RNA sequence: GGGAACGACUCGAGUAGAGUCGAAAAUCUAAGCUCAGGUGAGAACAUCCCUGCCUGAACAUGAGAAAAAACAGGGUACUCAUACUCACUUCUAAGUGACGGCUGCAUACUAACCGCUUCAUACAUCUCUGAUUCGAAAAUUCGUUUUCGAAUCAGAAAAAGAAACAACAACAACAAC
Reactivity to DMS in 0.01 (KOAc 150mM, MgCl2 10mM, bicine 150mM(pH8.5), 24C), signal-to-noise 3, nucleotides 027 to 126: u010c020u020a110a100g030c050u010c030a040g030g010u000g000a050g030a140a060c120a130u000c030c010c010u010g000c040c030u000g030a050a020c100a100u000g000a120g000a000a060a060a040a120a100c120a040g000g000g000u000a100c070u000c030a060u010a130c090u000c030a040c030u000u010c070u010a090a050g000u010g000a070c100g000g000c020u000g000c050a070u000a070c130u000a080a090c050c040g000c080u000u000c070a060u000a090c150a040u010c080
Reactivity to 2A3 in 0.01 (KOAc 150mM, MgCl2 10mM, bicine 150mM(pH8.5), 24C), signal-to-noise 3, nucleotides 027 to 126: u000c010u000a090a000g010c020u000c050a010g030g030u050g080a060g020a080a030c020a110u080c000c000c010u000g030c000c040u060g010a030a030c040a140u220g010a070g110a090a140a000a000a020a010c030a020g040g050g000u040a030c030u020c040a020u040a110c010u000c010a020c000u100u060c040u120a170a080g020u010g040a020c020g030g000c030u040g000c000a050u070a100c010u030a090a030c020c010g020c030u060u040c060a090u070a190c030a190u090c020